Record summary
The data come from the RNA Mapping Database (RMDB), library OK1LIB. The record gives the reactivity of an RNA of 177 nucleotides to 2A3 and DMS. The 2A3 profile rests on 1,758 reads. The reactions ran in a buffer of 150 mM KOAc, 10 mM MgCl2 and 150 mM bicine (pH 8.5), at 24 C.
RNA sequence: GGGAACGACUCGAGUAGAGUCGAAAAUUUAUAGGCGCUUUGUCUUAUGAUUUAUAUCAUCGUAUUAAGAACGGCAAAGAAUUUAGAGAAUACGGUCUAACCUUGUAUUGUGGUCGUCAGGGUGGCGCGAAGGGCACAUAUUCGUAUGUGCCCUUCGAAAAGAAACAACAACAACAAC
Reactivity to 2A3 in 0.01 (KOAc 150mM, MgCl2 10mM, bicine 150mM(pH8.5), 24C), signal-to-noise 4, nucleotides 027 to 126: u090u120u040a220u060a090g040g060c020g000c050u000u010u030g010u010c020u060u070a050u060g080a060u000u190u090a230u020a030u190c040a030u090c030g070u080a070u070u150a070a020g050a100a000c040g000g000c000a000a030a000g050a060a060u110u230u150a140g010a000g020a080a110u050a160c100g000g050u000c110u090a030a040c010c030u020u020g090u050a070u010u140g030u070g110g020u020c030g030u020c010a030g000g100g060u050g010g000c070g000
Reactivity to DMS in 0.01 (KOAc 150mM, MgCl2 10mM, bicine 150mM(pH8.5), 24C), signal-to-noise 4, nucleotides 027 to 126: u000u030u030a090u000a050g000g000c260g000c090u010u000u020g010u020c010u000u010a040u000g000a010u000u020u030a080u020a030u010c090a040u020c090g030u010a080u000u010a040a070g020a090a110c190g010g000c030a010a020a060g000a040a060u010u010u010a050g030a070g020a040a060u000a060c060g020g010u010c030u010a080a100c050c030u000u020g020u000a100u010u010g030u010g000g010u000c030g000u020c050a060g020g000g000u020g000g020c070g000